[RMDB]
RNA sequence: GGGAACGACUCGAGUAGAGUCGAAAAGUCGCAAACGACGAAACUUACGCACUAGCAGCUUAAGGGCUGCUUAGGACGGCACAAAUUGCCUUUGGUUUGGUUGCUCUCCUAGAUGCGAAUGCACAAAGGAUAGCCAAAAUUAGCGUUGCGAUGAUUUACCUCACAAUAGGUUCGCCUAUUGUGAGGUAAAAGAAACAACAACAACAAC
Reactivity to 2A3 in 0.01 (KOAc 150mM, MgCl2 10mM, bicine 150mM(pH8.5), 24C), signal-to-noise 2, nucleotides 027 to 156: g030u020c010g030c020a000a070a180c050g240a030c070g040a070a030a040c030u110u140a030c010g000c020a010c010u010a010g000c000a000g010c000u080u140a160a180g120g000g000c000u010g020c010u000u010a010g000g020a020c010g000g000c010a010c010a020a080a020u060u060g010c000c000u000u050u050g000g020u050u030u000g050g000u060u040g000c010u010c000u000c070c010u070a140g020a110u030g010c000g060a060a060u250g090c090a010c020a030a040a000g070g020a050u030a040g010c060c040a180a020a010a020u110u100a080g040c020g040u010u020g000c020g020a050u100g000a020u050u020u080
This 207-nucleotide RNA was probed chemically with 2A3. The reactions ran in a buffer of 150 mM KOAc, 10 mM MgCl2 and 150 mM bicine (pH 8.5), at 24 C.